[RMDB]
RNA sequence: GGGAACGACUCGAGUAGAGUCGAAAAGGUAGGGCAUUCGUGCCCUACCACACCUCUAAGCAGAUUGGGGAGGACGACGUCGCGGCCCACGUUUACCAACAACUACUCUCUCCUUCGGGAGAGAGAAAUCAAGACGUAACUUCGGUUACGUCUUGAUAAAAGAAACAACAACAACAAC
Reactivity to 2A3 in 0.01 (KOAc 150mM, MgCl2 10mM, bicine 150mM(pH8.5), 24C), signal-to-noise 3, nucleotides 027 to 126: g000g010u000a010g020g030g000c010a010u050u060c190g060u020g010c000c010c010u000a000c010c000a000c010a000c010c000u000c040u080a110a080g040c040a050g070a300u130u120g040g030g000g000a050g020g010a070c040g010a000c030g080u040c020g020c030g070g040c000c000c010a020c030g020u030u070u050a230c030c000a060a040c000a030a040c030u150a090c000u020c000u000c000u000c010c000u010u070c250g070g000g000a000g000a000g000a000g000a020a010
Reactivity to DMS in 0.01 (KOAc 150mM, MgCl2 10mM, bicine 150mM(pH8.5), 24C), signal-to-noise 2, nucleotides 027 to 126: g020g010u000a000g010g000g020c000a020u010u010c240g060u000g000c000c000c010u010a000c000c000a030c150a020c050c010u000c110u010a060a130g000c130a020g020a130u000u000g010g020g000g010a090g020g010a080c110g000a060c080g020u000c100g010c020g010g000c020c000c050a190c060g000u010u000u010a160c040c020a100a070c160a060a070c110u000a220c000u000c000u000c000u000c000c000u000u000c110g010g000g000a020g010a000g000a000g000a010a040